The record gives the reactivity of an RNA of 177 nucleotides to DMS and 2A3. For DMS the reverse transcriptase was MarathonRT. 2A3 adducts were read by reverse transcription with SuperScript II with manganese. For DMS, 4,243 sequencing reads were counted. For 2A3, 3,449 sequencing reads were counted. 2A3 is a SHAPE reagent: it acylates the 2'-hydroxyl of flexible nucleotides of all four kinds.
RNA sequence: GGGAACGACUCGAGUAGAGUCGAAAAGAUAUGGAUACAUAGUCUAGACGAAGAACGACCUCCCCACCCUAGUGGUCGGAAACGACCAGUAGGAGGGUCGGGAGUCUAGACUAUGUAUCCUAAGUCACGAUAUAUAUUCGUUCGCGAAUAUAUAUCGAAAAGAAACAACAACAACAAC
Reactivity to DMS in 0.01 (KOAc 150mM, MgCl2 10mM, bicine 150mM(pH8.5), 24C), signal-to-noise 4, nucleotides 027 to 126: g020a070u000a300u000g000g000a010u010a000c010a000u000a010g020u010c000u000a000g000a030c020g000a170a170g000a130a220c030g000a040c000c010u010c060c020c020c040a300c090c020c010u000a030g000u000g010g000u000c000g000g010a040a080a140c020g010a010c000c010a020g000u000a010g000g000a070g020g000g000u000c010g030g000g000a150g010u010c000u000a000g000a010c000u000a010u000g000u010a000u000c000c000u010a000a050g010u000c030a300
Reactivity to 2A3 in 0.01 (KOAc 150mM, MgCl2 10mM, bicine 150mM(pH8.5), 24C), signal-to-noise 1, nucleotides 027 to 126: g030a030u150a020u180g020g000a000u000a010c020a000u000a000g010u040c010u000a000g000a040c080g300a300a190g060a300a010c000g020a020c030c000u090c060c020c020c010a030c030c010c000u160a200g300u000g000g010u040c010g000g000a010a150a020c000g000a020c000c040a000g010u000a010g040g030a000g000g020g020u010c000g060g000g000a030g000u000c000u000a000g000a000c000u000a020u010g000u000a000u060c000c000u010a000a000g000u000c030a000